[RMDB]
RNA sequence: GGGAACGACUCGAGUAGAGUCGAAAACAAGAGAUGCAAUUGAUCAACCCUCCCCUCCCCUAUCUGGUCGUGGUGAUUGACGAAUUUGCCGACCUCAUGGCAACCGGCGCAAAAGAGCUAGAAGGACGAAUGUGUGAACAUUCGUGUUCACACAUUCAAAAGAAACAACAACAACAAC
Reactivity to 2A3 in 0.01 (KOAc 150mM, MgCl2 10mM, bicine 150mM(pH8.5), 24C), signal-to-noise 5, nucleotides 027 to 126: c060a060a040g030a010g010a090u100g060c050a060a180u160u140g040a060u160c030a020a130c010c010c020u020c010c020c010c000u020c010c000c000c000u040a070u020c030u040g020g020u030c020g040u030g050g020u040g030a100u040u060g010a040c030g020a060a110u040u030u060g010c000c000g040a080c020c000u050c030a060u070g020g000c000a010a020c020c020g020g010c020g000c030a040a040a030a050g050a010g010c000u040a030g030a100a020g090g010a010c070
Reactivity to DMS in 0.01 (KOAc 150mM, MgCl2 10mM, bicine 150mM(pH8.5), 24C), signal-to-noise 7, nucleotides 027 to 126: c080a110a120g000a120g020a060u000g000c090a080a100u000u010g010a090u010c070a110a190c040c010c010u000c010c000c000c010u000c010c010c010c030u000a060u000c060u000g000g020u000c030g020u010g030g030u000g000a070u000u000g000a070c120g020a050a100u000u000u000g020c020c010g010a080c060c030u010c070a050u010g010g000c030a030a080c080c040g010g010c060g020c070a040a030a090a090g010a100g010c050u000a060g010a070a110g000g010a110c180
Structure probing data (2A3 and DMS) for a 177-nucleotide construct. It was measured as part of the RMDB library OK2TST. For DMS the reverse transcriptase was MarathonRT. Reactivities are given for positions 27 through 126.